An RNA of 177 nucleotides, treated with 2A3 and DMS and read out base by base.
2A3 adducts were read by reverse transcription with SuperScript II with manganese.
For DMS the reverse transcriptase was MarathonRT.
It was measured as part of the RMDB library OK1LIB.
Values cover nucleotides 27 to 126.
RNA sequence: GGGAACGACUCGAGUAGAGUCGAAAAAUGAGGCAGCUGGGAUUUUUAUGACAGCCACUCCCCCGGGAAGCAGAGACCCAUUUCCUCAGAGCAAUGCACCAAUCAUAGAUGAAGAAAGAGAAAACCCGCAAAAUAUAUCGUUCGCGAUAUAUUUUGCAAAAGAAACAACAACAACAAC
Reactivity to 2A3 in 0.01 (KOAc 150mM, MgCl2 10mM, bicine 150mM(pH8.5), 24C), signal-to-noise 2, nucleotides 027 to 126: a010u090g020a050g040g010c050a050g040c060u090g050g000g120a200u020u090u020u130u110a120u140g040a030c060a020g010c000c000a010c030u010c020c010c000c020c020g040g000g000a080a010g050c020a010g020a010g030a150c000c000c000a000u040u020u030c010c000u010c050a000g000a000g030c030a070a060u080g000c020a010c040c000a020a050u010c010a060u130a120g050a060u100g030a060a080g040a060a170a000g060a000g000a030a010a050a040c040c060c020
Reactivity to DMS in 0.01 (KOAc 150mM, MgCl2 10mM, bicine 150mM(pH8.5), 24C), signal-to-noise 1, nucleotides 027 to 126: a060u020g000a040g000g000c110a020g000c030u000g010g030g010a080u010u030u040u020u010a040u020g000a210c090a030g000c070c150a200c050u040c000c010c000c030c060g020g000g000a090a060g000c030a020g000a170g010a060c110c000c010a100u020u000u000c000c000u000c020a000g000a150g010c000a000a010u020g010c000a070c050c020a030a100u110c070a050u020a040g030a080u010g060a090a050g000a040a070a060g000a120g000a040a090a100a150c160c040c170